The record gives the reactivity of an RNA of 207 nucleotides to 2A3 and DMS. Reactivities are given for positions 27 through 156. The reactions ran in a buffer of 150 mM KOAc, 10 mM MgCl2 and 150 mM bicine (pH 8.5), at 24 C. The 2A3 profile rests on 1,899 reads.

RNA sequence: GGGAACGACUCGAGUAGAGUCGAAAAUUGACAGACCUCAAGGUCGCUUAUGAUAACUUCCAUGACCUGUCGAGAAGUCAACUAUAUGCCCUUGAAAGGGAAUCCUUGAUGGUUGAUGAGAUUGUCGGUGCGUUAGACAACUUUGUCAAUGCGAUUGGAAAACCAAACAUUUCGAUGUUUGGUUUUCAAAAGAAACAACAACAACAAC
Reactivity to 2A3 in 0.01 (KOAc 150mM, MgCl2 10mM, bicine 150mM(pH8.5), 24C), signal-to-noise 4, nucleotides 027 to 156: u040u020g010a010c010a000g070a040c010c010u020c040a030a020g000g000u040c040g050c080u160u230a110u220g070a030u030a150a070c020u140u000c070c010a110u130g080a090c010c060u090g070u220c090g010a050g000a140a040g010u020c030a010a020c020u050a020u030a040u300g080c010c020c000u010u130g230a220a070a020g010g000g030a040a050u070c010c030u050u060g050a040u180g030g020u010u020g020a100u030g020a020g050a170u000u070g000u010c070g020g050u130g060c080g020u050u110a040g000a000c010a030a090c030u100u100u150g000u020c000a020a010u080g050c020g070a060u060u130g050
Reactivity to DMS in 0.01 (KOAc 150mM, MgCl2 10mM, bicine 150mM(pH8.5), 24C), signal-to-noise 3, nucleotides 027 to 156: u000u000g030a070c010a080g000a140c060c010u000c030a080a070g030g040u000c020g030c070u010u020a070u010g020a220u000a060a060c040u010u010c040c020a160u000g010a090c050c000u020g030u010c030g010a130g010a120a180g000u000c010a030a040c020u000a100u000a060u000g000c000c000c000u000u010g020a160a140a110g020g020g000a060a060u000c040c050u020u020g010a090u000g020g010u000u000g010a040u000g010a090g010a060u000u010g010u000c010g030g040u000g010c140g070u000u000a170g010a030c020a030a090c160u000u000u000g020u000c020a030a080u000g000c040g010a260u000u000g020